Source: RMDB library TTRDEL, as collected in RNAgym. Chemical mapping of a 177-nucleotide RNA with DMS.
[RMDB]
RNA sequence: GGGAACGACUCGAGUAGAGUCGAAAAGAUAUGGAAAGAGGCUUUUGACGGCUGAAACAUCGGAAACGAUGUACGCAGCCGAUAAGCUCCCCACCUUUCCUAAGUCAAAGCAACGUUCGCGUUGCAACUCUCGUAACGAGUUCGCUCGUUACGAGAGAAAAGAAACAACAACAACAAC
Reactivity to DMS in 0.01 (KOAc 150mM, MgCl2 10mM, bicine 150mM(pH8.5), 24C), signal-to-noise 2, nucleotides 027 to 126: g000a120u000a300u000g040g010a000a020a000g000a120g010g010c000u020u000u000u000g020a190c200g000g030c000u000g000a080a020a010c000a000u000c000g010g000a120a080a280c000g030a010u000g000u010a030c300g000c010a000g000c000c000g000a020u000a010a020g010c040u010c060c030c030c020a300c040c000u000u000u000c000c000u000a060a110g010u000c060a070a140a150g000c000a020a000c000g000u000u000c200g050c030g030u000u000g000c010a060a130